An RNA of 177 nucleotides, treated with DMS and 2A3 and read out base by base. For DMS the reverse transcriptase was MarathonRT. For 2A3 the reverse transcriptase was SuperScript II with manganese.

RNA sequence: GGGAACGACUCGAGUAGAGUCGAAAACAAUUUGACAAGUAAUGACAAGAAUGACUGUGAAUAUGUUGUUAUUUGUCAGUUAUGGAUGUUCGGUGUCUUAUUCACAGUCACAGCUCAGACAUCGGAGGAUAGAAUACUAUUUCGAUAGUAUUCUAUCAAAAGAAACAACAACAACAAC
Reactivity to DMS in 0.01 (KOAc 150mM, MgCl2 10mM, bicine 150mM(pH8.5), 24C), signal-to-noise 8, nucleotides 027 to 126: c060a090a090u050u020u010g000a010c000a000a000g000u000a000a010u000g000a000c010a090a110g010a120a090u030g010a030c010u000g010u000g010a020a090u040a070u030g010u000u000g010u000u000a000u000u000u000g010u000c010a040g010u030u020a070u010g010g010a160u020g010u010u010c000g020g010u000g000u000c010u010u010a050u010u000c000a010c000a010g000u010c050a130c250a090g020c150u020c100a010g000a000c010a010u000c000g000g000a050g000
Reactivity to 2A3 in 0.01 (KOAc 150mM, MgCl2 10mM, bicine 150mM(pH8.5), 24C), signal-to-noise 9, nucleotides 027 to 126: c020a060a090u130u060u100g000a000c000a000a000g000u000a010a000u010g020a000c020a020a050g150a210a210u250g020a060c010u000g000u020g030a020a020u160a130u280g000u000u000g000u000u000a000u010u000u000g000u000c010a000g000u060u090a110u170g210g040a090u150g040u050u030c000g000g010u000g000u000c000u030u070a060u030u020c000a000c000a010g010u030c060a040c060a190g060c030u070c110a000g000a010c000a000u000c020g000g000a030g040
The RNA was probed in 150 mM KOAc, 10 mM MgCl2 and 150 mM bicine (pH 8.5) at 24 C.